[RMDB]
RNA sequence: GGGAACGACUCGAGUAGAGUCGAAAACGCAUACUCACUAACCGGAGGUGGUGUCUACUUGACGUCUCAGUAGUACCAUCCUUUUGUAGUGGUUCUGAUCACCGUCUCCUUCGUGCGAAAAUACGUCGGACGGGUACGAGUUCGCUCGUACCCGUCCAAAAGAAACAACAACAACAAC
Reactivity to 2A3 in 0.01 (KOAc 150mM, MgCl2 10mM, bicine 150mM(pH8.5), 24C), signal-to-noise 3, nucleotides 027 to 126: c100g000c050a060u150a200c020u060c100a010c000u070a180a030c010c000g060g000a000g000g040u000g000g000u000g010u020c000u000a010c000u100u150g120a060c130g220u110c020u020c160a010g000u000a000g010u010a000c000c010a060u300c020c000u090u000u020u050g040u020a000g030u000g000g020u100u000c070u130g040a040u050c020a040c030c090g070u010c040u000c100c060u090u080c040g000u040g070c030g140a040a000a070a080u190a050c140g020u050c090